[RMDB]
Source: RMDB library OK2TRN, as collected in RNAgym. An RNA of 177 nucleotides, treated with 2A3 and DMS and read out base by base. 2A3 adducts were read by reverse transcription with SuperScript II with manganese. For DMS the reverse transcriptase was MarathonRT.

RNA sequence: GGGAACGACUCGAGUAGAGUCGAAAACGGAAUCCAGCCGGACCGCGCGCACAUCGAAGCGAUUGCCCAGCCGCUUGGCCAACUCGAUGACGUGAUCGACGCCGCGUAGCGUGUCGUAGGUGUCCACGACCAUGACGUCGUUCGCGACGUCAUGGUCAAAAGAAACAACAACAACAAC
Reactivity to 2A3 in 0.01 (KOAc 150mM, MgCl2 10mM, bicine 150mM(pH8.5), 24C), signal-to-noise 2, nucleotides 027 to 126: c030g050g000a010a060u030c020c000a010g090c080c000g060g000a030c030c010g060c010g000c000g050c020a090c010a130u060c070g080a040a010g000c010g100a120u000u180g050c000c020c000a020g040c040c030g080c040u050u160g030g000c040c040a040a070c040u040c020g100a100u070g050a040c050g000u030g020a060u120c000g020a020c030g010c030c010g060c050g050u120a060g020c060g040u080g030u020c030g020u060a190g050g070u070g020u030c020c040a050c030
Reactivity to DMS in 0.01 (KOAc 150mM, MgCl2 10mM, bicine 150mM(pH8.5), 24C), signal-to-noise 1, nucleotides 027 to 126: c070g000g010a100a080u020c010c080a200g030c060c060g000g010a070c020c070g000c030g030c010g000c130a170c100a050u010c040g030a060a100g000c070g020a090u020u010g000c000c020c000a170g000c110c010g000c090u010u020g030g020c060c090a040a070c100u020c020g000a010u000g010a300c050g000u010g000a090u000c050g040a110c030g040c050c030g020c120g030u000a060g040c020g040u010g000u000c030g000u000a120g000g040u020g000u000c020c070a120c190